Chemical mapping of a 207-nucleotide RNA with DMS and 2A3. The reactions ran in a buffer of 150 mM KOAc, 10 mM MgCl2 and 150 mM bicine (pH 8.5), at 24 C. For DMS, 2,812 sequencing reads were counted. For DMS the reverse transcriptase was MarathonRT. It was measured as part of the RMDB library OK3TST.

[RMDB]
RNA sequence: GGGAACGACUCGAGUAGAGUCGAAAAAUUUGUGGCCUGCGAAGCCGCAGUAUGCCUUGCCUUACUAGUUUCAAUCUCCAACACAUACAGCCUAGAUUAUGUACAAAAUCUAAAUUUACUUCAAUGCUAAAAGUUAUUAUUCCAACAAUUAUACUGACGUGACGUAUUUAUUCGUAAAUACGUCACGAAAAGAAACAACAACAACAAC
Reactivity to DMS in 0.01 (KOAc 150mM, MgCl2 10mM, bicine 150mM(pH8.5), 24C), signal-to-noise 2, nucleotides 027 to 156: a100u000u000u000g050u010g040g010c010c010u010g050c180g020a120a120g010c020c000g030c030a040g030u000a130u000g020c020c000u000u010g000c020c000u020u010a090c080u000a110g040u000u010u010c090a090a150u000c020u000c010c010a100a110c150a080c020a100u000a060c040a060g010c010c020u000a050g020a050u000u000a020u020g000u000a190c060a040a030a040a030u010c020u000a040a070a090u000u020u000a040c040u000u000c050a070a130u010g000c030u010a080a080a130a110g020u000u010a030u000u000a080u000u000c000c000a070a180c060a050a040u030u000a100u000a100c100u010g010a140
Reactivity to 2A3 in 0.01 (KOAc 150mM, MgCl2 10mM, bicine 150mM(pH8.5), 24C), signal-to-noise 4, nucleotides 027 to 156: a000u090u100u050g030u010g000g010c020c030u090g070c140g070a100a010g020c030c010g000c020a000g040u050a030u100g000c000c020u020u050g000c030c010u090u110a100c060u020a050g090u030u050u080c060a080a100u020c010u020c080c010a070a070c030a000c000a050u080a040c030a030g050c000c010u040a040g000a060u060u050a070u200g100u080a050c040a060a110a010a010u020c010u070a060a060a130u080u060u070a040c020u030u070c040a000a080u080g040c010u120a070a020a030a060g020u020u020a040u150u030a070u110u040c050c000a030a010c010a080a090u180u070a080u080a180c050u050g050a020